[RMDB]
RNA sequence: GGGAACGACUCGAGUAGAGUCGAAAAGGGGGAUCGUCCUCGUUAUCAACGUCAAAGCCAAUAAUAACUGGCAAAGAAAAACAAAACCUAGCUUUCGCUGCCUAAUAAGCAGUAGCAUAGCUGAUCCUCCGUGCAUCGCCCAUGUGCUACGGUAAGGCGUCUUUUUAUAGUUCGCUAUAAAAAGACGAAAAGAAACAACAACAACAAC
Reactivity to 2A3 in 0.01 (KOAc 150mM, MgCl2 10mM, bicine 150mM(pH8.5), 24C), signal-to-noise 7, nucleotides 027 to 156: g030g000g000g000g000a040u180c010g060u080c020c020u010c010g030u050u090a090u100c040a010a030c020g060u050c080a100a050a060g000c010c030a040a020u190a160a040u120a120a110c090u030g000g000c000a040a070a010g050a030a090a020a010a000c080a020a100a010a010c040c070u080a020g000c000u030u030u020c020g000c000u000g000c000c000u080a120a060u260a200a000g000c000a000g010u010a040g000c030a030u020a020g000c010u030g010a050u030c000c000u000c010c000g000u010g000c000a020u050c050g060c010c010c000a010u070g000u000g000c040u080a010c010g000g030u060a040a040g020g000
Reactivity to DMS in 0.01 (KOAc 150mM, MgCl2 10mM, bicine 150mM(pH8.5), 24C), signal-to-noise 4, nucleotides 027 to 156: g030g000g010g040g020a070u000c040g030u010c050c020u000c040g030u000u010a100u000c080a080a110c050g000u000c050a080a110a200g020c000c000a040a100u000a130a100u000a100a140c090u000g020g020c020a060a080a120g000a040a060a040a080a270c030a080a050a060a090c020c030u000a080g050c020u000u000u000c000g010c000u000g020c020c010u000a100a090u000a100a060g000c000a030g010u000a050g050c070a020u010a040g040c040u000g010a080u000c000c010u000c010c010g030u000g020c030a080u000c050g000c010c020c020a160u010g010u000g010c020u000a040c020g010g020u000a050a090g010g030
This 207-nucleotide RNA was probed chemically with 2A3 and DMS. Values cover nucleotides 27 to 156. DMS adducts were read by reverse transcription with MarathonRT.